[RMDB]
RNA sequence: GGGAACGACUCGAGUAGAGUCGAAAAGAGUAAUAUAUUCCAAUCCCAACUUUUGUCCAGUUGGGCGGCGGAAGAACGUUCUCUUUGAGGGCAUUGAAACGGUAUGGAUGCGGGAUAGCAAAGCAGCGAGCAACAUAAAGUUCGCUUUAUGUUGCUCAAAAGAAACAACAACAACAAC
Reactivity to DMS in 0.01 (KOAc 150mM, MgCl2 10mM, bicine 150mM(pH8.5), 24C), signal-to-noise 3, nucleotides 027 to 126: g000a020g010u000a020a020u000a070u010a210u000u010c010c010a090a300u000c000c010c000a010a010c010u000u010u000u030g020u020c280c300a030g010u000u010g000g000g000c170g000g010c300g000g000a030a010g020a090a150c270g010u010u000c000u000c010u000u000u010g010a160g000g010g010c070a070u000u000g000a040a050a100c130g000g000u000a080u020g000g000a060u010g010c070g020g000g000a070u000a060g030c080a050a090a070g020c150a070g010c180
Reactivity to 2A3 in 0.01 (KOAc 150mM, MgCl2 10mM, bicine 150mM(pH8.5), 24C), signal-to-noise 1, nucleotides 027 to 126: g050a000g020u180a080a080u070a000u020a010u200u000c000c000a010a030u030c000c000c000a010a000c000u080u030u160u210g080u050c060c030a000g020u000u000g000g020g000c000g180g040c010g010g030a010a000g020a000a010c010g010u030u000c020u000c000u010u000u050g110a060g000g020g000c070a050u040u150g080a170a050a050c040g040g010u140a050u110g020g040a010u060g050c000g010g000g060a020u040a000g070c080a020a120a020g050c050a020g070c000